[RMDB]
RNA sequence: GGGAACGACUCGAGUAGAGUCGAAAAAGGCACACUGAUCACACUGUCAACUUCAGUAACAGCUGCGUGACGGUUCGGCCGCGUUCGAAUUACGGUUGUUCGCUUGAGCUUUCGCGUGCGCUUUGGCCUGGAUGGAGACGUUCGCGUCUCCAUCCAGAAAAGAAACAACAACAACAAC
Reactivity to DMS in 0.01 (KOAc 150mM, MgCl2 10mM, bicine 150mM(pH8.5), 24C), signal-to-noise 1, nucleotides 027 to 126: a100g030g050c050a130c060a000c050u020g000a030u000c170a000c060a020c010u010g000u000c010a140a020c060u000u000c120a060g000u030a130a070c160a010g000c000u000g000c120g010u050g000a100c070g020g000u000u010c040g000g000c070c080g020c060g000u000u000c060g000a120a100u000u040a120c190g020g010u000u000g020u000u000c000g030c000u060u010g000a090g000c060u000u000u000c020g000c080g020u020g000c080g000c030u000u000u000g000g040c090
Reactivity to 2A3 in 0.01 (KOAc 150mM, MgCl2 10mM, bicine 150mM(pH8.5), 24C), signal-to-noise 2, nucleotides 027 to 126: a030g030g010c030a000c020a030c000u100g010a100u070c000a000c000a010c010u080g080u090c040a070a060c060u190u030c150a040g040u090a090a240c040a010g020c000u080g000c010g100u070g020a070c040g000g040u110u140c000g000g000c040c060g000c090g050u040u070c000g020a100a000u180u110a190c100g010g000u010u030g000u050u000c000g040c010u030u180g010a020g020c010u050u000u050c020g000c000g040u020g000c140g010c010u000u000u060g020g020c010